[RMDB]
The record gives the reactivity of an RNA of 177 nucleotides to 2A3 and DMS. 2A3 adducts were read by reverse transcription with SuperScript II with manganese. The DMS profile rests on 2,498 reads. The RNA was probed in 150 mM KOAc, 10 mM MgCl2 and 150 mM bicine (pH 8.5) at 24 C. Source: RMDB library TTRDES, as collected in RNAgym.
RNA sequence: GGGAACGACUCGAGUAGAGUCGAAAAGAUAUGGAGUAUCACAAGGUCCUUGGAUUUAUCUUCGGAAACGAAGAUUGUCAGGACCUGUGAGUACUCCUAAGUCAAAAGGUGUUCUUCGGAACACCAACUCUCCAUUCAUGUUCGCAUGAAUGGAGAGAAAAGAAACAACAACAACAAC
Reactivity to 2A3 in 0.01 (KOAc 150mM, MgCl2 10mM, bicine 150mM(pH8.5), 24C), signal-to-noise 4, nucleotides 027 to 126: g030a010u070a080u220g010g000a010g010u000a000u050c010a010c090a270a230g040g000u000c020c040u150u260g230g010a090u300u300u300a040u040c000u010u000c030g000g070a130a080a000c010g000a000a000g000a000u000u020g010u020c000a000g000g000a000c010c010u000g000u000g000a010g000u020a010c000u000c000c000u010a110a010g060u040c040a040a000a080a270g000g000u030g010u000u010c010u010u140c300g160g010a010a000c010a000c020c000a000a010
Reactivity to DMS in 0.01 (KOAc 150mM, MgCl2 10mM, bicine 150mM(pH8.5), 24C), signal-to-noise 2, nucleotides 027 to 126: g000a030u000a300u000g000g000a030g010u010a040u000c000a020c020a070a100g020g030u000c000c010u010u010g040g000a020u010u000u000a030u010c000u000u000c010g010g000a170a120a200c000g010a010a020g010a000u000u000g010u000c000a040g000g000a000c000c010u000g020u000g000a040g010u000a000c000u000c010c000u010a020a090g010u000c020a110a090a170a140g000g030u010g000u000u000c000u000u010c250g000g000a000a010c000a000c000c010a010a050